This 207-nucleotide RNA was probed chemically with DMS and 2A3. As a SHAPE reagent, 2A3 marks flexible, mostly unpaired nucleotides at the ribose 2'-OH. For 2A3 the reverse transcriptase was SuperScript II with manganese. For DMS, 6,482 sequencing reads were counted.

[RMDB]
RNA sequence: GGGAACGACUCGAGUAGAGUCGAAAACUUGAAGGCUAGAUGUCUCUCUUCUGAUUAUGCGUGAUAAGAAAUCAGUAAGAAGAAUAAAAGACAUGUUUGAGAGCCAACAUAAACUUGUCCGAACCCCUUACAAUCGAUGACCGCAGGGAGCCGCUGAUAAUACCAUUAGUUUCGACUAAUGGUAUUAAAAAGAAACAACAACAACAAC
Reactivity to DMS in 0.01 (KOAc 150mM, MgCl2 10mM, bicine 150mM(pH8.5), 24C), signal-to-noise 3, nucleotides 027 to 156: c050u000u000g010a080a210g010g030c030u000a100g020a080u000g010u000c010u000c140u000c060u000u000c010u000g010a260u000u000a090u010g040c110g000u000g030a140u020a070a230g000a130a100a090u010c010a130g010u010a050a040g010a150a060g010a060a120u010a050a050a090a060g000a020c010a030u010g010u000u000u000g010a170g000a090g020c040c050a040a190c050a080u000a050a050a080c040u000u010g010u010c000c000g000a080a090c030c000c010c030u000u000a100c040a040a100u000c030g000a120u000g000a090c070c060g020c040a100g020g010g040a070g040c020c030g030c040u000g010a160
Reactivity to 2A3 in 0.01 (KOAc 150mM, MgCl2 10mM, bicine 150mM(pH8.5), 24C), signal-to-noise 4, nucleotides 027 to 156: c020u060u080g020a100a010g030g000c030u040a030g000a130u030g020u000c010u000c000u000c000u070u000c000u000g050a040u030u100a070u240g100c110g030u120g140a080u100a260a110g060a100a070a000u020c020a010g040u130a030a020g030a030a000g010a070a030u190a120a130a020a000g020a000c010a020u030g110u060u110u120g200a250g010a000g010c010c020a010a000c020a030u100a010a060a020c040u090u070g020u020c010c020g040a080a090c040c000c010c020u010u040a060c060a130a140u100c030g070a050u090g050a060c040c040g010c060a020g040g020g020a030g020c030c030g020c060u020g020a040